[RMDB]
RNA sequence: GGGAACGACUCGAGUAGAGUCGAAAAGCGGUACUUCGGUACCGCACGGGUCCUAAGUCAGGAUGGGAGGAAGGAUGGAGCUAGUCGGAAACGACUUGGACCUCCAUCCCUUCCUUUGAUCAUCCUGAUAUGGAAUAGACUCUCCUUCGGGAGAGAAUAAAACGCAUAUGUUCGCAUAUGCGUUUUAAAAAGAAACAACAACAACAAC
Reactivity to 2A3 in 0.01 (KOAc 150mM, MgCl2 10mM, bicine 150mM(pH8.5), 24C), signal-to-noise 2, nucleotides 027 to 156: g000c000g000g010u010a000c020u030u180c300g040g010u010a010c010c010g020c000a000c000g130g010g000u020c000c020u070a140a040g020u000c000a010g020g000a000u010g000g030g030a010g000g000a000a000g020g000a000u000g010g000a000g000c010u020a000g030u000c000g010g110a100a090a070c010g010a020c000u020u070g030g090a100c000c020u000c000c000a000u020c010c000c000u020u000c000c000u040u020u040g000a000u000c000a000u020c000c000u010g000a010u010a040u040g000g020a030a030u060a180g120a130c000u030c000u030c000c020u060u080c220g070g000g000a010g010a010g010a040a010
Reactivity to DMS in 0.01 (KOAc 150mM, MgCl2 10mM, bicine 150mM(pH8.5), 24C), signal-to-noise 2, nucleotides 027 to 156: g030c000g020g000u000a000c000u000u010c300g070g010u000a000c000c000g000c000a010c070g010g000g000u000c000c020u000a060a300g020u000c020a020g000g000a040u000g010g000g000a000g030g000a060a040g000g010a040u010g010g010a040g020c040u000a040g000u000c020g020g010a170a120a300c010g030a010c000u010u000g030g020a090c280c010u000c010c000a010u000c080c020c020u000u000c020c020u000u010u000g010a110u000c010a040u000c000c010u000g000a010u000a130u000g010g010a070a110u000a170g000a220c010u000c000u000c010c010u000u000c300g030g000g010a020g010a020g000a040a120